[RMDB]
Background:
Chemical mapping of a 177-nucleotide RNA with DMS.

RNA sequence: GGGAACGACUCGAGUAGAGUCGAAAAGUGCUGGAAAAAAUCGCCGAUGAACUGGAAGCACAAAGCGAAAUCAUCCUCAACGCUAACGCCCAGGAUGUUGCUGACGCGCGAGCCAAUGGCCUUAGCGUCGUCUUCGCCAGUUCGCUGGCGAAGACGAAAAAGAAACAACAACAACAAC
Reactivity to DMS in 0.01 (KOAc 150mM, MgCl2 10mM, bicine 150mM(pH8.5), 24C), signal-to-noise 1, nucleotides 027 to 126: g000u000g030c020u010g020g000a000a020a030a090a130a080u010c050g040c000c000g040a050u000g000a070a040c040u000g000g010a090a110g000c070a030c140a030a090a100g010c040g030a030a140a120u000c070a070u000c020c040u030c230a230a080c130g030c080u000a060a030c250g020c030c030c300a130g000g000a020u000g010u000u010g110c040u000g040a010c030g030c030g000c150g010a040g030c000c000a130a030u010g020g030c050c030u000u000a110g030c010g030

The reactions ran in a buffer of 150 mM KOAc, 10 mM MgCl2 and 150 mM bicine (pH 8.5), at 24 C.